[RMDB]
RNA sequence: GGGAACGACUCGAGUAGAGUCGAAAAGAUAUGGAAUCUGAAUAGCAACAGCCAUGGGUCGGAAACGACCUUGUGGACAUGCUACAGAUUCCUAAGUCAAACACCAUCAGCUUCGGCUGAUGGUGAAUCCAUGCACUAUGUUCGCAUAGUGCAUGGAAAAAGAAACAACAACAACAAC
Reactivity to 2A3 in 0.01 (KOAc 150mM, MgCl2 10mM, bicine 150mM(pH8.5), 24C), signal-to-noise 4, nucleotides 027 to 126: g000a000u020a000u060g000g020a010a000u000c010u030g090a300a180u090a080g000c110a050a250c110a300g000c010c010a010u020g020g000g010u010c000g030g000a000a010a000c010g030a020c000c020u050u170g030u000g000g030a040c040a180u300g000c000u010a000c000a000g010a000u010u000c000c000u000a000a000g000u000c000a100a100a040c010a010c010c010a000u020c010a000g000c020u100u240c300g240g000c000u000g000a000u010g020g000u010g010a000a020
Reactivity to DMS in 0.01 (KOAc 150mM, MgCl2 10mM, bicine 150mM(pH8.5), 24C), signal-to-noise 3, nucleotides 027 to 126: g010a010u000a050u010g010g000a020a000u000c000u000g000a220a220u000a010g020c010a210a210c170a160g010c010c000a010u000g010g010g010u000c000g000g000a010a010a010c000g000a020c000c000u000u000g040u000g000g010a030c070a110u010g020c000u000a040c010a000g000a010u000u000c000c000u000a000a060g000u000c010a240a160a300c020a010c000c000a000u000c000a010g020c000u000u030c240g030g000c000u000g010a010u000g000g010u000g000a000a070
About this RNA: The record gives the reactivity of an RNA of 177 nucleotides to 2A3 and DMS. For DMS the reverse transcriptase was MarathonRT. Reactivities are given for positions 27 through 126. The RNA was probed in 150 mM KOAc, 10 mM MgCl2 and 150 mM bicine (pH 8.5) at 24 C. 2A3 is a SHAPE reagent: it acylates the 2'-hydroxyl of flexible nucleotides of all four kinds.